[RMDB]
RNA sequence: GGGAACGACUCGAGUAGAGUCGAAAAAUCUGUGACUUAAUCAAGGUUGAUGAGUAUAUCUAUCUCAUUGAUGGUGCCAUCAGAGCCAAAGUUACAAGUGUCUGCAAGGACCAUAUCGAAACAGUCAAUGAUAACAUCCCUUCGGGGAUGUUAUCAUAAAAGAAACAACAACAACAAC
Reactivity to DMS in 0.01 (KOAc 150mM, MgCl2 10mM, bicine 150mM(pH8.5), 24C), signal-to-noise 2, nucleotides 027 to 126: a100u010c050u000g000u000g010a010c020u000u000a140a120u000c160a110a180g000g030u000u000g000a020u010g030a140g020u010a100u020a070u000c110u000a070u000c010u010c300a060u000u010g000a010u000g000g020u010g020c040c000a020u000c030a050g000a090g000c020c010a180a080a060g000u000u000a010c040a050a070g000u000g000u010c000u010g030c130a080a080g020g010a140c010c050a100u000a040u000c040g000a080a040a070c180a050g000u010c110a110
Reactivity to 2A3 in 0.01 (KOAc 150mM, MgCl2 10mM, bicine 150mM(pH8.5), 24C), signal-to-noise 1, nucleotides 027 to 126: a000u040c050u010g000u020g030a020c010u090u160a070a130u160c060a070a080g010g020u060u040g020a020u010g010a030g060u090a040u000a000u190c050u020a020u010c050u000c050a210u050u070g000a020u020g000g040u030g050c000c000a030u000c050a040g040a040g120c000c020a080a070a080g020u000u000a010c010a070a100g010u000g040u090c010u030g080c040a010a050g000g000a000c020c000a030u110a110u300c090g060a110a050a000c010a020g040u050c030a090
The record gives the reactivity of an RNA of 177 nucleotides to DMS and 2A3. Values are in units of 0.01, from 0 to 300, in steps of 10. It was measured as part of the RMDB library OK2TST. DMS adducts were read by reverse transcription with MarathonRT. The RNA was probed in 150 mM KOAc, 10 mM MgCl2 and 150 mM bicine (pH 8.5) at 24 C.